[RMDB]
This 177-nucleotide RNA was probed chemically with 2A3 and DMS.
Conditions: 150 mM KOAc, 10 mM MgCl2 and 150 mM bicine (pH 8.5), 24 C.
The data come from the RNA Mapping Database (RMDB), library OK1LIB.

RNA sequence: GGGAACGACUCGAGUAGAGUCGAAAAAACUGGACGACGGUGACGGCACCGGCUGCUGCCAGAACGAGCGCCAUGGCGGCGCUGAAGACGAGGGUGAGUCGCCAUCGGAUGGGCCACUCAGCGGGGGCCCUGGCGACCAAUUCGUUGGUCGCCAGGGAAAAGAAACAACAACAACAAC
Reactivity to 2A3 in 0.01 (KOAc 150mM, MgCl2 10mM, bicine 150mM(pH8.5), 24C), signal-to-noise 2, nucleotides 027 to 126: a000a000c090u070g040g000a010c040g000a010c010g040g000u020g050a010c040g090g090c040a010c000c000g070g020c050u080g000c020u040g010c050c010a020g030a010a030c100g040a010g110c050g010c010c030a120u170g200g010c070g010g000c030g000c010u000g040a050a010g080a040c090g000a060g010g050g010u010g030a050g000u040c000g000c010c000a030u040c020g090g000a070u060g020g060g000c020c030a050c030u050c020a010g040c030g010g000g000g000g030
Reactivity to DMS in 0.01 (KOAc 150mM, MgCl2 10mM, bicine 150mM(pH8.5), 24C), signal-to-noise 2, nucleotides 027 to 126: a050a050c050u000g000g000a100c020g020a030c050g040g010u000g000a120c070g020g000c020a030c020c040g000g030c070u060g030c020u040g000c080c060a040g030a130a080c150g010a050g030c010g000c000c030a150u000g010g000c210g000g020c040g000c010u000g020a080a070g010a080c080g000a090g020g010g000u000g000a210g020u000c060g000c000c000a080u020c050g010g020a120u000g000g010g010c010c040a060c060u000c100a030g030c040g000g000g000g000g000